Structure probing data (2A3 and DMS) for a 177-nucleotide construct. DMS adducts were read by reverse transcription with MarathonRT. The 2A3 profile rests on 574 reads. It was measured as part of the RMDB library RFM100. The reactions ran in a buffer of 150 mM KOAc, 10 mM MgCl2 and 150 mM bicine (pH 8.5), at 24 C.
[RMDB]
RNA sequence: GGGAACGACUCGAGUAGAGUCGAAAAAAUAAUCAGCACAGGCUAAACAUUUGCUAUAUAAAAACCAGGUGUGUGUCCCCAGACCUAGUUCUUUUCCUAGGUUUGGUUUUAUAAAUGCUGUUGAUAAUAGCUAGCGUUAAUUCGUUAACGCUAGCUAAAAAGAAACAACAACAACAAC
Reactivity to 2A3 in 0.01 (KOAc 150mM, MgCl2 10mM, bicine 150mM(pH8.5), 24C), signal-to-noise 1, nucleotides 027 to 126: a000a000u190a020a020u090c000a000g060c000a000c000a080g090g000c030u100a110a020a040c020a020u000u130u000g020c040u050a000u090a030u120a300a100a030a000a000c060c000a000g000g000u010g000u030g000u000g040u040c000c000c000c000a010g030a000c000c000u000a000g080u200u080c120u160u290u100u220c000c000u000a000g000g000u000u010u010g020g000u000u000u000u000a080u020a020a080a000u030g020c040u000g020u020u020g020a060u010a190a020
Reactivity to DMS in 0.01 (KOAc 150mM, MgCl2 10mM, bicine 150mM(pH8.5), 24C), signal-to-noise 3, nucleotides 027 to 126: a070a100u030a070a030u000c010a000g010c000a020c050a120g010g010c010u000a060a050a010c020a000u000u000u020g000c060u010a150u020a180u030a070a080a060a090a130c300c000a010g000g010u000g010u010g000u000g000u020c010c060c000c020a020g000a010c010c000u000a020g000u020u020c120u000u040u010u020c160c000u000a000g000g000u000u000u000g000g000u000u030u040u010a110u050a080a040a130u000g010c020u000g000u000u020g010a100u020a070a110